RNA sequence: GGGAACGACUCGAGUAGAGUCGAAAAGAACAGGCCCCGUCCGUAUAGGCCUCGAUGCGCUUCACGCCGCAACUCCCUGCAUUUCAAGGCCAUAUUCGGCGCCGGAUUCGAUCUGGCGGUGAAAGCAUCAUUUUAAUAUCUUCGGAUAUUAAAAUGAAAAAGAAACAACAACAACAAC
Reactivity to DMS in 0.01 (KOAc 150mM, MgCl2 10mM, bicine 150mM(pH8.5), 24C), signal-to-noise 9, nucleotides 027 to 126: g010a120a110c110a110g010g010c020c010c030c090g010u000c030c040g030u000a060u000a080g020g010c020c010u010c080g020a060u000g010c040g020c070u000u010c110a090c100g010c030c070g010c090a080a170c130u000c020c010c010u000g010c040a060u000u000u000c070a070a090g010g010c000c030a110u000a110u000u000c030g010g010c030g010c010c000g000g000a040u000u010c190g010a180u000c010u000g010g000c000g010g000u000g000a040a060a140g020c140a140
Reactivity to 2A3 in 0.01 (KOAc 150mM, MgCl2 10mM, bicine 150mM(pH8.5), 24C), signal-to-noise 4, nucleotides 027 to 126: g020a090a030c040a060g090g000c010c010c010c010g070u050c020c000g050u090a070u060a100g030g000c010c010u010c030g050a050u050g010c030g020c020u140u150c090a040c110g030c050c020g040c050a060a170c020u020c000c000c000u020g030c030a060u050u100u120c040a050a000g030g000c010c000a030u040a070u090u050c020g040g000c000g020c020c000g020g010a030u180u150c050g050a070u000c010u010g030g000c020g110g050u050g030a050a050a000g020c000a030

Chemical mapping of a 177-nucleotide RNA with DMS and 2A3. For 2A3, 6,743 sequencing reads were counted. For 2A3 the reverse transcriptase was SuperScript II with manganese. Values are in units of 0.01, from 0 to 300, in steps of 10. Values cover nucleotides 27 to 126. The RNA was probed in 150 mM KOAc, 10 mM MgCl2 and 150 mM bicine (pH 8.5) at 24 C.